[RMDB]
RNA sequence: GGGAACGACUCGAGUAGAGUCGAAAAUGGACAUUUGCUGCCGCCUUCUAAUGCUAUGCCUCAAUCUGAUCGCGUUACUUUCCAAGAUCUAUACCAGAUGCUGGAUGCUAUGGAUAAAGAACUCGUAGGACUUAAAGAAGUAUUGGAGACUGUCACCGGACGAUGUCUAUUUCGAUAGACAUCGUCCAAAAGAAACAACAACAACAAC
Reactivity to 2A3 in 0.01 (KOAc 150mM, MgCl2 10mM, bicine 150mM(pH8.5), 24C), signal-to-noise 2, nucleotides 027 to 156: u090g030g000a000c010a040u150u100u150g010c040u050g000c000c010g040c010c000u050u110c010u080a070a060u060g000c020u080a080u220g050c020c040u090c070a060a080u000c040u050g050a040u270c060g010c000g040u020u030a050c000u110u100u020c000c000a010a000g030a090u000c010u040a070u100a210c070c070a070g020a140u050g090c040u050g090g020a020u060g050c010u030a070u110g030g040a030u130a110a110a010g040a020a020c010u000c020g020u020a000g000g090a040c020u050u110a030a130a030g040a030a000g020u020a040u020u130g020g000a030g010a010c030u000g020u050c020a020c080c050